Structure probing data (2A3 and DMS) for a 177-nucleotide construct. Source: RMDB library RFMREP, as collected in RNAgym.
RNA sequence: GGGAACGACUCGAGUAGAGUCGAAAAGCGAUGAUUUAAAAUAGCCUUCUUGGUCUUGUGCGCAAAGUACGCAAAAAAGCAGUCAAAAGCGCUUGGAGUGUGACGCACGGAAUCUGAGAGUGUUUCGCUGUUAUUAUAACUUCGGUUAUAAUAACAGAAAAGAAACAACAACAACAAC
Reactivity to 2A3 in 0.01 (KOAc 150mM, MgCl2 10mM, bicine 150mM(pH8.5), 24C), signal-to-noise 4, nucleotides 027 to 126: g040c050g070a060u120g050a050u100u140u300a110a160a080a100u100a070g020c010c000u030u040c010u030u040g020g000u010c000u090u260g010u020g020c020g000c030a050a070a040g110u090a040c020g000c020a010a300a000a030a100a000g010c050a030g040u100c050a050a060a050a040g060c040g010c010u000u010g020g000a050g010u020g000u040g050a040c000g000c000a000c000g010g020a040a030u050c030u060g030a020g000a020g070u040g010u000u010u000c020g000
Reactivity to DMS in 0.01 (KOAc 150mM, MgCl2 10mM, bicine 150mM(pH8.5), 24C), signal-to-noise 6, nucleotides 027 to 126: g020c050g010a090u010g010a110u010u010u010a080a070a140a130u010a110g010c030c020u000u000c030u000u000g010g010u000c020u000u020g040u000g010c010g010c090a070a090a120g010u010a050c030g010c010a000a050a140a080a020a030g020c010a060g010u010c050a080a070a190a230g010c140g010c010u000u000g000g000a300g000u000g000u000g010a080c040g000c010a010c020g010g010a030a050u000c030u010g000a080g010a060g020u000g000u000u000u000c030g010
Conditions: 150 mM KOAc, 10 mM MgCl2 and 150 mM bicine (pH 8.5), 24 C.